[RMDB]
RNA sequence: GGGAACGACUCGAGUAGAGUCGAAAAGAUAUGGACCCUGAAGCUCUUUUGACGCUCUCCGGGUCGGAAACGACCCAGGAGCGAUAAGAGCUCAGGGUCCUAAGUCAAACUGCGGUUCGCCGCAGAACAAUUAUGGUUGCUUCGGCAACCAUAAUUGAAAAGAAACAACAACAACAAC
Reactivity to DMS in 0.01 (KOAc 150mM, MgCl2 10mM, bicine 150mM(pH8.5), 24C), signal-to-noise 2, nucleotides 027 to 126: g010a070u000a300u000g010g000a000c000c000c000u000g000a090a110g000c000u000c020u000u000u000u000g010a280c100g010c000u000c030u020c050c140g010g000g000u000c010g010g000a070a090a260c020g020a000c000c010c000a140g000g000a020g010c000g030a070u000a010a010g000a010g000c000u000c000a010g020g010g020u000c010c010u000a010a040g010u000c050a110a160a240c020u000g010c010g000g010u010u030c290g030c010c000g010c010a010g000a080a220
Reactivity to 2A3 in 0.01 (KOAc 150mM, MgCl2 10mM, bicine 150mM(pH8.5), 24C), signal-to-noise 1, nucleotides 027 to 126: g020a020u100a060u140g000g000a000c030c000c000u040g210a190a040g030c020u030c020u030u180u120u250g290a190c060g030c020u000c100u030c170c280g000g000g000u010c010g020g000a020a040a000c030g000a020c000c030c000a040g000g020a000g000c000g000a020u000a000a000g000a000g000c020u000c000a000g000g000g000u000c000c000u020a000a000g000u060c000a020a000a060c010u020g010c010g000g060u040u120c240g070c180c000g000c000a000g010a060a010

The record gives the reactivity of an RNA of 177 nucleotides to DMS and 2A3. For 2A3 the reverse transcriptase was SuperScript II with manganese.